The record gives the reactivity of an RNA of 177 nucleotides to DMS and 2A3. The DMS profile rests on 1,803 reads. Conditions: 150 mM KOAc, 10 mM MgCl2 and 150 mM bicine (pH 8.5), 24 C.
RNA sequence: GGGAACGACUCGAGUAGAGUCGAAAAUGCAGGGUUUUCUCUACCGCACUGGCCAUUUUUUGCUGAGCUGAUGGGAUGUCUGCGUGCACUUUCGCGGCGACGGCAGCAAAAAUCGCCGCACCGAGCGCAGGUUCUCAAAAUUCGUUUUGAGAACCUGAAAAGAAACAACAACAACAAC
Reactivity to DMS in 0.01 (KOAc 150mM, MgCl2 10mM, bicine 150mM(pH8.5), 24C), signal-to-noise 2, nucleotides 027 to 126: u010g030c040a100g020g010g010u000u020u010u000c040u010c060u000a190c110c060g020c060a060c090u000g000g000c020c120a030u000u000u010u010u010u010g000c030u000g000a160g010c060u000g000a090u010g020g000g010a060u020g010u000c030u010g030c040g010u000g010c070a080c120u000u000u020c180g040c030g000g000c000g000a040c140g010g020c070a060g010c100a000a050a050a080a050u010c050g000c010c020g010c030a090c150c090g000a090g020c150g020
Reactivity to 2A3 in 0.01 (KOAc 150mM, MgCl2 10mM, bicine 150mM(pH8.5), 24C), signal-to-noise 1, nucleotides 027 to 126: u170g020c030a080g080g060g000u070u030u070u060c000u010c020u060a080c030c020g000c030a040c060u060g050g000c040c000a130u070u020u090u100u170u200g010c030u030g030a050g000c040u040g020a100u080g020g010g060a020u040g080u020c010u030g000c040g040u020g000c000a040c120u120u240u230c130g000c000g010g020c010g010a020c000g060g070c050a070g000c000a070a130a000a060a030u020c020g000c000c000g010c010a020c040c010g010a020g050c090g010